Notes
Structure probing data (DMS and 2A3) for a 177-nucleotide construct. The reactions ran in a buffer of 150 mM KOAc, 10 mM MgCl2 and 150 mM bicine (pH 8.5), at 24 C. For DMS the reverse transcriptase was MarathonRT. For 2A3, 1,581 sequencing reads were counted.
RNA sequence: GGGAACGACUCGAGUAGAGUCGAAAAGAACAAAUGGCGCAGCAUUGCGAAGCUUUUAAAGCUAAUUUUAAAGGUGCAGCUCAAGGAGACUGGGUUAAAAGUGCAAUGUCUGAGAUAGACAGUAUUAGCUUAUCACAGCAUUCGUGCUGUGAUAAGCAAAAGAAACAACAACAACAAC
Reactivity to DMS in 0.01 (KOAc 150mM, MgCl2 10mM, bicine 150mM(pH8.5), 24C), signal-to-noise 1, nucleotides 027 to 126: g000a130a100c020a060a090a080u020g000g000c090g000c050a020g000c030a110u020u010g000c030g010a050a090g020c000u000u000u010u000a020a000a020g000c240u030a050a080u050u030u000u000a010a070a000g010g000u000g000c100a120g000c000u070c030a030a060g000g000a110g050a060c010u000g000g000g040u030u000a000a010a070a110g000u010g020c050a060a020u020g000u000c000u010g000a080g000a110u020a010g010a050c100a070g000u010a090u020u040a080
Reactivity to 2A3 in 0.01 (KOAc 150mM, MgCl2 10mM, bicine 150mM(pH8.5), 24C), signal-to-noise 3, nucleotides 027 to 126: g120a060a010c060a050a070a070u170g080g020c060g000c040a000g010c050a070u000u080g000c030g090a070a050g000c010u040u050u080u150a040a020a020g070c070u080a090a190u010u160u000u060a060a070a050g100g030u080g000c000a010g000c000u000c050a030a110g060g010a050g020a050c010u040g000g040g020u040u080a040a060a000a100g070u160g010c010a040a060u060g050u110c030u030g020a030g000a080u110a030g110a040c020a000g060u040a120u140u090a030